RNA sequence: GGGAACGACUCGAGUAGAGUCGAAAAAAAGCAUGGGAAACUUGUCAACGCUUUUGAUGCCUUUAAAGACAUUGAGGAUAUUGAGCACUAUUCCCAGACUCCAGAAGCUCAGUUCUUUCUAGGCUGGCAAGUCCACCAGUUUCGACUGGUGGACUUGAAAAGAAACAACAACAACAAC
Reactivity to 2A3 in 0.01 (KOAc 150mM, MgCl2 10mM, bicine 150mM(pH8.5), 24C), signal-to-noise 4, nucleotides 027 to 126: a000a000a000g070c050a080u070g010g040g060a090a040a100c040u140u060g080u130c060a080a050c120g030c030u100u080u040u070g090a080u150g000c000c000u050u040u040a050a030a010g040a030c050a080u020u110g030a020g030g060a050u020a130u190u100g000a000g030c040a050c150u050a140u040u020c000c020c030a050g060a100c020u030c010c010a020g040a150a040g060c010u000c010a000g010u040u000c000u010u040u000c030u020a010g020g000c020u020g020g010
Reactivity to DMS in 0.01 (KOAc 150mM, MgCl2 10mM, bicine 150mM(pH8.5), 24C), signal-to-noise 2, nucleotides 027 to 126: a000a030a020g000c060a120u020g000g000g000a070a040a080c140u040u000g030u000c070a080a130c210g000c040u020u000u010u020g000a050u020g000c000c000u000u020u010a040a000a010g000a030c120a010u020u000g000a040g000g000a070u010a060u010u000g000a030g020c150a030c050u000a120u010u000c010c020c000a200g030a200c020u010c000c100a050g040a120a150g020c010u000c010a030g010u020u010c020u010u000u000c030u000a020g000g000c000u020g000g010